[RMDB]
RNA sequence: GGGAACGACUCGAGUAGAGUCGAAAAGAUAUGGAGGCUUUCAACUGACGAUCGGAUCGGAAACGAUCCGAAUCGCGUGAUGUUGGGCCUCCUAAGUCAAACAAAUACUCGUUCGCGAGUAUUUGAAGAGUGUUCAGUAGUUCGCUACUGAACACUCAAAAGAAACAACAACAACAAC
Reactivity to DMS in 0.01 (KOAc 150mM, MgCl2 10mM, bicine 150mM(pH8.5), 24C), signal-to-noise 2, nucleotides 027 to 126: g000a050u000a080u020g010g010a040g000g030c010u000u010u000c040a020a020c000u010g020a100c040g000a000u000c000g000g010a020u010c020g000g000a010a030a130c030g030a020u000c000c000g020a020a010u010c040g030c300g010u000g010a030u010g010u010u000g000g000g030c010c000u010c000c000u000a000a050g000u000c000a040a130a180c020a000a000a000u000a000c020u010c000g010u000u010c300g020c020g000a020g030u000a000u000u000u000g000a120a160
Reactivity to 2A3 in 0.01 (KOAc 150mM, MgCl2 10mM, bicine 150mM(pH8.5), 24C), signal-to-noise 2, nucleotides 027 to 126: g020a000u030a020u080g000g010a000g030g000c080u060u300u300c060a060a040c010u300g170a160c050g000a000u010c000g000g020a020u010c010g000g030a060a000a000c010g000a000u040c050c030g000a000a030u020c030g010c020g190u240g060a050u110g000u000u010g000g010g030c000c000u000c000c000u000a020a000g010u030c020a030a000a020c030a000a010a000u020a010c000u020c010g050u130u060c260g000c000g240a000g010u000a000u020u000u000g000a140a030
The record gives the reactivity of an RNA of 177 nucleotides to DMS and 2A3. For 2A3, 2,209 sequencing reads were counted. 2A3 adducts were read by reverse transcription with SuperScript II with manganese. Source: RMDB library TTRDES, as collected in RNAgym. The RNA was probed in 150 mM KOAc, 10 mM MgCl2 and 150 mM bicine (pH 8.5) at 24 C. DMS adducts were read by reverse transcription with MarathonRT.